[RMDB]
RNA sequence: GGGAACGACUCGAGUAGAGUCGAAAAUCAAAAUCUUAUUUUUGGUAUGCAAAAGGAGGAACUGAAUGUUAGCACAUUGGAGCUCAGCAACCAAACUCCAAUUCUGCUGGAGGCCAAAUCUCAUAGGCUUAUAGAAGGAUUUCGAUCCUUCUAUAAGAAAAGAAACAACAACAACAAC
Reactivity to DMS in 0.01 (KOAc 150mM, MgCl2 10mM, bicine 150mM(pH8.5), 24C), signal-to-noise 6, nucleotides 027 to 126: u000c040a060a050a060a060u010c150u010u000a080u010u000u000u000u010g010g010u000a070u010g010c070a040a060a100a110g010g020a100g010g010a050a090c100u000g000a070a070u000g010u010u000a040g020c060a060c130a070u000u010g000g010a030g010c040u000c100a070g020c060a060a070c080c050a080a090a130c010u000c010c000a030a080u000u010c100u000g010c040u000g000g010a090g010g010c050c050a030a060a070u000c040u000c060a090u010a120g020g000
Reactivity to 2A3 in 0.01 (KOAc 150mM, MgCl2 10mM, bicine 150mM(pH8.5), 24C), signal-to-noise 4, nucleotides 027 to 126: u040c000a040a020a000a030u040c050u140u230a170u130u080u020u010u040g030g010u060a050u140g050c050a030a070a030a090g050g010a030g030g020a060a060c030u050g050a080a070u100g030u070u100a010g000c030a010c030a120u020u100g060g010a020g000c020u040c100a040g020c010a030a050c030c020a050a060a020c010u000c010c000a070a090u130u030c050u100g040c010u020g030g060a040g020g060c020c020a060a070a050u030c050u020c040a090u100a090g100g000